Structure probing data (DMS and 2A3) for a 177-nucleotide construct. For DMS, 19,199 sequencing reads were counted.
[RMDB]
RNA sequence: GGGAACGACUCGAGUAGAGUCGAAAAGGUGGCUCCUUCUCACGAGAGGGGUGUCGUCACUGGGAGUCACCGAUUUAGCAUGUUCGUCCUACUUUACUACGGAGUACCGUGUAGGACGUUCAUGCGAGGGAUGGAGAACCUUCGGGUUUUCCAUCCCAAAAGAAACAACAACAACAAC
Reactivity to DMS in 0.01 (KOAc 150mM, MgCl2 10mM, bicine 150mM(pH8.5), 24C), signal-to-noise 6, nucleotides 027 to 126: g010g010u000g000g010c010u000c000c000u010u010c140u000c130a060c140g000a080g010a100g000g010g010g020u020g010u010c020g010u000c160a050c110u010g020g000g010a010g020u010c000a010c010c000g000a050u020u030u000a160g020c000a010u000g000u000u000c000g020u000c000c000u000a000c000u030u050u040a100c200u060a080c040g000g020a300g010u030a070c050c050g010u010g000u000a000g010g010a000c000g010u000u000c000a000u000g010c000g010a080
Reactivity to 2A3 in 0.01 (KOAc 150mM, MgCl2 10mM, bicine 150mM(pH8.5), 24C), signal-to-noise 9, nucleotides 027 to 126: g000g000u000g000g000c000u010c000c000u060u050c040u020c020a030c020g120a110g040a070g050g110g020g030u110g050u040c020g040u040c020a010c060u020g000g000g000a000g000u010c000a000c010c000g000a000u020u020u060a010g000c000a000u000g000u010u000c000g000u000c010c000u000a020c010u190u260u120a150c120u050a020c030g050g020a130g180u120a300c020c010g010u020g000u030a000g000g000a000c000g000u000u000c000a000u000g000c000g000a120